[RMDB]
RNA sequence: GGGAACGACUCGAGUAGAGUCGAAAAUAUGCAGGGUGAUCAUUAAGACUGUAUAGACAACAGGCUGGGUGUGGUGGCUCACACCUGUAAUCCCAGGACUUUGAGAGGCUGAGGUGGGCGGAUCCCUUGAGGCCAGGAGUUCAAGACCAGCCUGGCCGUGAUGAAUGUGUUUCGACACAUUCAUCACAAAAGAAACAACAACAACAAC
Reactivity to 2A3 in 0.01 (KOAc 150mM, MgCl2 10mM, bicine 150mM(pH8.5), 24C), signal-to-noise 4, nucleotides 027 to 156: u210a050u060g000c020a030g000g030g050u060g050a060u100c080a120u080u230a070a060g040a030c010u030g030u060a070u100a140g110a040c040a070a010c010a070g040g010c010u050g020g010g000u050g020u010g020g030u030g040g000c030u040c060a030c010a040c020c000u020g010u060a030a050u030c000c000c000a000g000g030a030c070u090u120u090g060a090g010a020g040g030c060u050g030a010g030g040u050g020g020g000c020g020g040a060u060c000c000c010u020u080g080a040g000g010c000c000a000g000g000a030g000u110u150c070a080a000g060a060c030c020a000g010c010c000u000g010g000c010c020
Reactivity to DMS in 0.01 (KOAc 150mM, MgCl2 10mM, bicine 150mM(pH8.5), 24C), signal-to-noise 2, nucleotides 027 to 156: u000a050u000g030c010a070g030g040g020u000g020a110u000c100a100u000u000a090a140g010a110c020u000g000u000a110u010a140g010a150c040a130a080c010a070g010g010c030u010g020g000g000u000g050u000g010g010u000g030g010c100u000c030a060c020a040c020c010u030g000u010a060a090u000c020c010c010a150g020g010a030c030u010u010u020g010a080g020a070g000g000c040u000g000a060g000g040u000g010g030g030c060g000g000a100u010c010c020c010u000u010g000a090g020g010c000c010a050g000g000a270g000u010u000c040a090a090g010a080c040c020a150g000c000c000u000g020g030c000c030
An RNA of 207 nucleotides, treated with 2A3 and DMS and read out base by base. The RNA was probed in 150 mM KOAc, 10 mM MgCl2 and 150 mM bicine (pH 8.5) at 24 C. DMS adducts were read by reverse transcription with MarathonRT. The DMS profile rests on 4,608 reads. The data come from the RNA Mapping Database (RMDB), library OK3TST.